[RMDB]
RNA sequence: GGGAACGACUCGAGUAGAGUCGAAAACUGUUGUCAAUUGUUUGCGUAAUAGUAGCAUGAUUUAGUACGAGAGGAACUGUCAUGCCGGAUCACUGGUCUGUAGGUUUAUUUGACAAAAUAGUGACCUGCCGCUACCAUCCGUUGGAUAAUGGCUGAACCUAACAGUAACGUUCGCGUUACUGUUAGGAAAAGAAACAACAACAACAAC
Reactivity to DMS in 0.01 (KOAc 150mM, MgCl2 10mM, bicine 150mM(pH8.5), 24C), signal-to-noise 2, nucleotides 027 to 156: c020u000g010u010u000g020u010c030a110a120u000u000g000u010u010u010g030c060g040u010a100a090u010a150g030u010a060g020c000a050u000g000a060u010u000u000a080g080u010a120c050g010a250g010a220g030g010a130a080c110u000g020u020c010a030u000g000c020c020g020g010a050u000c030a050c100u010g020g010u010c030u000g070u010a040g010g000u000u000u000a070u010u000u010g020a130c120a040a050a070a060u000a020g030u010g010a020c010c020u000g010c030c060g030c030u000a060c040c020a050u020c010c100g000u010u030g020g000a080u000a030a080u010g020g010c000u000g010a130a220
Reactivity to 2A3 in 0.01 (KOAc 150mM, MgCl2 10mM, bicine 150mM(pH8.5), 24C), signal-to-noise 3, nucleotides 027 to 156: c020u030g000u010u010g040u060c060a100a080u060u020g050u050u080u120g050c050g020u080a090a110u080a200g100u050a030g000c000a000u020g020a030u050u050u050a010g020u010a010c040g010a020g030a040g180g010a010a000c010u000g000u020c000a000u010g000c030c000g010g020a040u030c050a020c090u010g030g050u110c010u030g040u070a020g010g070u010u050u080a080u060u060u140g130a100c070a050a090a010a040u130a040g040u030g050a020c000c010u000g000c010c020g010c020u010a010c010c040a000u020c010c010g010u020u080g060g020a120u150a240a090u170g080g000c020u010g020a070a040